The record gives the reactivity of an RNA of 177 nucleotides to 2A3 and DMS. For 2A3 the reverse transcriptase was SuperScript II with manganese. Reactivities are given for positions 27 through 126. It was measured as part of the RMDB libraries RFM100 and RFMREP. The RNA was probed in 150 mM KOAc, 10 mM MgCl2 and 150 mM bicine (pH 8.5) at 24 C.

[RMDB]
RNA sequence: GGGAACGACUCGAGUAGAGUCGAAAAGCCGACCCUACAGGGUUGCGCCGGCCUCCGGGUUGCACACCGCCCAGAAGGUGGAGUGAGGUGAGCCGUCGCCAACAGCGCCGAGCCAGGACAGUUACCCAAAAGAUCUUUAUUUCGAUAAAGAUCUUUUAAAAGAAACAACAACAACAAC
Reactivity to 2A3 in 0.01 (KOAc 150mM, MgCl2 10mM, bicine 150mM(pH8.5), 24C), signal-to-noise 6, nucleotides 027 to 126: g040c020c010g020a030c010c000c000u050a080c070a120g020g000g030u020u050g010c030g000c000c000g020g010c010c000u000c010c010g100g030g010u060u140g020c020a010c000a010c020c010g030c000c010c010a110g070a170a040g020g020u050g010g020a060g020u060g030a060g000g040u040g020a020g020c010c020g030u040c000g020c010c000a050a030c020a040g050c010g000c010c010g010a010g020c010c020a020g020g030a030c010a020g010u040u080a140c010c000c000
Reactivity to DMS in 0.01 (KOAc 150mM, MgCl2 10mM, bicine 150mM(pH8.5), 24C), signal-to-noise 9, nucleotides 027 to 126: g010c060c010g010a040c020c010c000u030a120c230a170g000g000g010u000u010g000c100g020c020c020g010g010c020c010u010c020c030g000g010g010u010u030g010c040a050c040a120c010c010g000c010c010c030a150g020a140a240g000g020u000g000g000a090g020u010g000a130g000g010u010g000a110g000c020c020g010u000c030g010c030c070a080a110c100a080g000c040g010c030c020g020a090g010c010c030a070g010g000a070c080a080g000u010u010a120c010c010c030